[RMDB]
An RNA of 177 nucleotides, treated with DMS and 2A3 and read out base by base. The RNA was probed in 150 mM KOAc, 10 mM MgCl2 and 150 mM bicine (pH 8.5) at 24 C. For 2A3 the reverse transcriptase was SuperScript II with manganese. For DMS, 10,608 sequencing reads were counted.
RNA sequence: GGGAACGACUCGAGUAGAGUCGAAAAUAACAUCGUAGUGUAAGACGAAAAGUCAACGUCGCUUGCCAGCAGGACCACCAAAGGAAUACGCUUCGGUAACUACUCGAGAACCCAAGCGAUAACACAAUAUUUGUAAUACUUUCGAGUAUUACAAAUAAAAAGAAACAACAACAACAAC
Reactivity to DMS in 0.01 (KOAc 150mM, MgCl2 10mM, bicine 150mM(pH8.5), 24C), signal-to-noise 8, nucleotides 027 to 126: u010a110a110c090a070u000c050g010u010a070g020u000g020u000a070a100g000a060c020g000a070a070a100a110g000u000c040a080a080c110g010u000c030g000c050u000u000g010c040c030a050g000c040a060g010g000a080c050c060a050c040c060a020a070a100g010g010a100a110u000a080c100g010c080u000u000c030g010g010u000a070a100c010u000a010c000u000c010g010a020g010a130a100c010c010c010a070a060g010c100g000a060u010a030a030c080a050c150a070a090
Reactivity to 2A3 in 0.01 (KOAc 150mM, MgCl2 10mM, bicine 150mM(pH8.5), 24C), signal-to-noise 6, nucleotides 027 to 126: u050a010a020c020a050u070c040g060u040a080g030u030g030u110a070a060g050a030c020g050a100a080a090a040g060u040c060a040a050c040g050u020c010g010c050u020u080g040c020c020a010g030c020a030g040g050a030c010c010a010c010c030a090a030a040g070g030a090a060u070a070c040g010c040u010u010c010g000g010u020a100a120c000u010a000c000u000c000g000a000g000a030a020c010c010c000a010a000g080c040g110a100u110a170a040c070a010c020a110a080